Structure probing data (2A3) for a 177-nucleotide construct.
RNA sequence: GGGAACGACUCGAGUAGAGUCGAAAACUUGCGACUUACACGUAGGGCGAGGGGUGGGCGAAAGUUGCCAUGAGACCGUAACUUUCGUAGUCAUUGAUAAAGGGGCAGGUCUCGCUCUUUUGUCAUUAUCGGCUAAGAUGUUCGCAUCUUAGCCGAUAAAAGAAACAACAACAACAAC
Reactivity to 2A3 in 0.01 (KOAc 150mM, MgCl2 10mM, bicine 150mM(pH8.5), 24C), signal-to-noise 2, nucleotides 027 to 126: c070u060u070g010c040g050a040c040u090u160a000c190a010c040g070u040a040g000g050g030c150g070a060g000g030g010g020u220g060g030g000c000g000a000a000a000g000u050u070g000c000c030a160u090g090a000g010a060c030c000g000u000a030a030c000u030u000u000c000g010u000a020g060u020c050a060u020u240g010a120u110a130a070a000g000g000g000g030c000a000g090g090u030c050u020c000g000c010u030c000u040u040u010u130g080u030c000a040u030u040

Reactivities are given for positions 27 through 126. Reactivities are rounded to 0.1 and cut off at 0 and 3. For 2A3 the reverse transcriptase was SuperScript II with manganese.